[RMDB]
RNA sequence: GGGAACGACUCGAGUAGAGUCGAAAAAGGAAAGCAAAGAAAGCAACGGGGCUAGUCGGUGGGUGUUCCGCCUUCCGAGAGGGGACGAGUGAGGCUUAUCCCGGGGAACUCGGCGAAUCGUCCCCACCCAUCUAGGAUUCUUCGGAAUCCUAGAUGGAAAAGAAACAACAACAACAAC
Reactivity to 2A3 in 0.01 (KOAc 150mM, MgCl2 10mM, bicine 150mM(pH8.5), 24C), signal-to-noise 2, nucleotides 027 to 126: a010g040g010a100a010a020g030c060a110a020a150g060a060a090a010g050c020a000a070c040g000g020g030g000c070u060a020g090u060c000g000g000u000g000g010g000u040g060u130u040c030c040g040c010c020u040u050c030c010g090a090g080a070g050g000g000g000a000c020g000a030g040u140g040a030g040g010c020u040u080a050u050c010c000c000g000g000g000g040a130a080c030u030c050g000g040c020g050a020a050u020c000g000u020c000c030c000c000a010c000
Reactivity to DMS in 0.01 (KOAc 150mM, MgCl2 10mM, bicine 150mM(pH8.5), 24C), signal-to-noise 2, nucleotides 027 to 126: a110g010g010a090a070a040g010c060a080a080a090g000a080a060a090g010c060a090a050c090g000g000g010g000c120u000a120g030u000c040g000g000u000g020g030g010u000g000u020u000c070c070g020c030c000u000u000c010c010g010a050g000a120g010g010g020g040a020c070g010a050g000u000g000a100g000g010c040u000u000a140u000c000c000c010g030g010g010g000a090a080c070u020c020g010g020c130g010a060a070u000c000g030u010c000c000c000c000a040c200